[RMDB]
RNA sequence: GGGAACGACUCGAGUAGAGUCGAAAAGCAAAAGAUUAUCCAGGUGUAGCGGUGAAAUUCGUAGAGAUCUGGUGGAUAAUGAACCGGUGGCGAAGGCGUAAGAUAACCGCUGAAAAGAAGAAUUGAACCCUUUUUAUUAGUUCGCUAAUAAAAAGGGAAAAGAAACAACAACAACAAC
Reactivity to DMS in 0.01 (KOAc 150mM, MgCl2 10mM, bicine 150mM(pH8.5), 24C), signal-to-noise 5, nucleotides 027 to 126: g010c080a050a040a090a100g010a110u000u000a040u000c020c020a090g020g020u010g010u010a040g030c020g000g000u000g000a050a100a100u010u000c020g020u010a090g010a130g010a070u000c010u000g010g020u000g000g020a090u010a060a080u020g020a110a040c040c010g010g020u000g000g020c180g010a050a100g010g000c030g000u010a040a070g000a070u000a080a060c020c010g010c010u000g000a050a040a070a090g000a060a080g010a080a120u010u000g010a090a150
Reactivity to 2A3 in 0.01 (KOAc 150mM, MgCl2 10mM, bicine 150mM(pH8.5), 24C), signal-to-noise 1, nucleotides 027 to 126: g070c010a050a050a050a000g070a060u110u120a030u090c030c020a020g000g060u090g120u170a000g000c010g010g040u020g000a000a070a090u040u020c030g030u050a030g000a000g020a230u050c000u030g020g010u040g060g010a080u150a250a150u250g000a010a030c050c000g080g020u020g010g060c040g050a010a020g080g000c070g050u080a030a010g040a090u060a010a030c000c040g000c020u020g040a030a030a010a040g090a070a030g040a050a050u180u160g070a090a070